[RMDB]
RNA sequence: GGGAACGACUCGAGUAGAGUCGAAAACGGGGCCUUGCAACGAAGCCGGCGGUGCGCCGGCGCCUUUCAGGCACGCGCGACGCGGUUUUCGAACGCCGGGAGCGCCGAGUGCGGCCUGCCCCACGGACACUCGGUGAUUAUUCGUAAUCACCGAGUGAAAAGAAACAACAACAACAAC
Reactivity to DMS in 0.01 (KOAc 150mM, MgCl2 10mM, bicine 150mM(pH8.5), 24C), signal-to-noise 3, nucleotides 027 to 126: c150g020g000g000g010c020c070u000u000g010c100a090a170c070g020a090a140g030c010c000g010g000c010g030g000u000g040c060g020c030c010g010g010c020g010c080c040u000u000u010c120a040g000g000c030a080c030g010c010g010c020g010a230c270g000c000g000g010u000u000u000u000c090g020a140a170c210g010c160c010g020g010g020a120g000c040g010c000c010g000a280g000u000g000c020g000g000c000c030u000g010c020c010c000c020a110c220g000g000a300
Reactivity to 2A3 in 0.01 (KOAc 150mM, MgCl2 10mM, bicine 150mM(pH8.5), 24C), signal-to-noise 2, nucleotides 027 to 126: c040g020g000g050g000c030c050u110u160g000c030a100a080c060g100a080a020g040c000c020g180g050c030g040g260u230g060c060g000c020c040g040g020c000g000c010c000u030u130u090c070a010g010g040c120a100c090g010c010g050c010g010a010c010g000c000g050g030u070u050u020u060c010g030a150a030c140g020c060c010g030g000g020a060g050c010g000c000c010g000a010g080u100g020c000g010g000c000c010u030g000c010c010c000c010a010c070g070g020a020